[RMDB]
Background:
An RNA of 207 nucleotides, treated with 2A3 and DMS and read out base by base. The 2A3 profile rests on 3,294 reads.
RNA sequence: GGGAACGACUCGAGUAGAGUCGAAAAAGCAGGUAAAAAUAACCACGUGCAGAAGAGAGCCACGGGACACCAGCAGGUUAACCCUGACCACAUGCAGAAAGGGCGGACUAGGAUGCCCUAGCAGGUUACAGUGAGCAUGUGCAGAAAGGGACUGACAGAAAAUGCAUUUAUUCGUAAAUGCAUUUUCAAAAGAAACAACAACAACAAC
Reactivity to 2A3 in 0.01 (KOAc 150mM, MgCl2 10mM, bicine 150mM(pH8.5), 24C), signal-to-noise 4, nucleotides 027 to 156: a010g040c040a030g050g040u110a060a040a090a060a070u120a110a040c020c010a050c070g020u030g020c040a020g020a180a010g030a050g000a010g020c030c010a010c040g010g010g020a010c010a020c030c020a020g060c020a010g010g010u070u120a090a120c000c000c000u000g010a020c000c010a010c000a010u030g000c010a000g110a110a080a010g020g000g000c040g030g020a030c060u070a050g140g020a090u160g010c000c000c000u010a020g010c030a030g050g020u050u110a060c030a080g060u040g070a010g020c020a010u000g010u010g000c050a020g100a080a070a000g060g020g020a070c030u050g010a010c020a000
Reactivity to DMS in 0.01 (KOAc 150mM, MgCl2 10mM, bicine 150mM(pH8.5), 24C), signal-to-noise 2, nucleotides 027 to 156: a080g050c040a040g010g000u000a020a060a120a090a060u020a120a110c030c030a060c040g030u010g000c080a070g020a130a080g020a150g000a030g030c100c020a060c030g020g050g000a130c080a030c000c020a090g040c060a100g030g030u010u000a040a130c040c000c000u010g000a290c170c000a030c030a010u010g020c030a140g020a080a130a060g000g010g050c060g020g020a210c040u000a140g050g000a290u000g010c110c010c010u010a050g010c070a030g020g010u000u080a090c050a090g010u010g030a190g000c010a030u010g020u000g000c100a060g000a070a030a060g020g000g000a120c010u000g010a080c050a240